[RMDB]
RNA sequence: GGGAACGACUCGAGUAGAGUCGAAAAGAGCGAUUAGACAAAGGGGUAGAGCUACAUAUUAGAUAGCUGUAUAAUCGUUAAAGUUACAUCAAAACAUCUUCAAUAUUUAUUACUUACUUUCCUUUCUGCCAGAGUACGGUAUUCGUACCGUACUCAAAGUUAUUGAAGGGUUCGCCCUUCAAUAACUAAAAGAAACAACAACAACAAC
Reactivity to 2A3 in 0.01 (KOAc 150mM, MgCl2 10mM, bicine 150mM(pH8.5), 24C), signal-to-noise 5, nucleotides 027 to 156: g110a000g000c020g010a030u050u070a040g030a090c050a060a090a030g020g020g030g020u060a010g010a000g040c000u020a000c020a070u270a130u230u060a090g190a300u010a020g020c010u010g000u040a050u000a040a030u020c000g010u010u050a070a110a000g010u040u110a050c040a100u160c060a070a120a080a080c010a090u100c080u230u100c090a100a120u100a180u230u180u130a140u070u140a060c020u060u020a020c000u030u060u070c020c010u050u090u060c030u040g050c040c040a040g000a000g000u000a000c000g000g000u000a000u010u020c080g020u010a000c000c000g000u000a000c000u000c010a000a000
Reactivity to DMS in 0.01 (KOAc 150mM, MgCl2 10mM, bicine 150mM(pH8.5), 24C), signal-to-noise 2, nucleotides 027 to 156: g010a070g030c030g040a120u000u000a050g000a130c110a050a050a080g000g000g030g000u010a070g020a040g020c020u000a050c070a120u000a130u000u020a170g010a150u000a020g010c020u010g010u010a050u000a050a050u020c100g000u000u000a020a110a140g000u000u000a040c040a060u000c060a070a100a060a090c020a070u000c040u000u020c030a030a100u010a090u000u000u000a040u010u000a050c030u020u000a050c020u000u010u010c010c000u000u000u010c030u010g060c020c070a150g010a050g000u000a000c000g030g000u000a030u000u000c300g020u000a010c000c000g020u000a000c010u000c000a010a020
Chemical mapping of a 207-nucleotide RNA with 2A3 and DMS. The reactions ran in a buffer of 150 mM KOAc, 10 mM MgCl2 and 150 mM bicine (pH 8.5), at 24 C. DMS adducts were read by reverse transcription with MarathonRT. For 2A3 the reverse transcriptase was SuperScript II with manganese.